[RMDB]
RNA sequence: GGGAACGACUCGAGUAGAGUCGAAAAGCUGCAAGACCUGCGCGCCGAGAUCCCGGGGCGAGGGACCCUGGGCGGCGCGAUCUGCACAGCGCCGAGCCUGCAUCGCGCCCCCGCCAGGACCAGAGCCGCCUCUAAUAUUUUUCGAAAUAUUAGAGGCAAAAGAAACAACAACAACAAC
Reactivity to DMS in 0.01 (KOAc 150mM, MgCl2 10mM, bicine 150mM(pH8.5), 24C), signal-to-noise 6, nucleotides 027 to 126: g020c050u000g010c050a100a100g000a110c140c030u010g010c040g010c020g020c030c010g000a230g010a130u000c010c000c010g000g010g000g030c020g010a150g010g010g010a140c040c010c010u000g000g000g000c120g010g000c000g020c000g000a010u000c060u000g010c050a070c160a100g010c030g000c080c060g010a120g000c030c060u000g000c050a090u000c040g000c040g010c020c010c020c030c060g000c040c030a040g000g000a090c040c030a080g000a300g010c100c120
Reactivity to 2A3 in 0.01 (KOAc 150mM, MgCl2 10mM, bicine 150mM(pH8.5), 24C), signal-to-noise 3, nucleotides 027 to 126: g030c030u050g000c020a050a130g020a110c020c030u050g010c050g010c020g000c010c010g050a060g030a150u090c000c010c020g000g020g000g000c060g030a130g040g060g060a080c000c000c020u020g020g000g010c020g000g000c010g000c000g010a000u000c000u040g030c020a030c020a050g010c000g010c020c030g020a020g010c010c030u030g000c020a040u030c020g000c010g010c040c020c010c020c000g070c020c010a010g000g020a010c020c040a010g230a020g090c010c100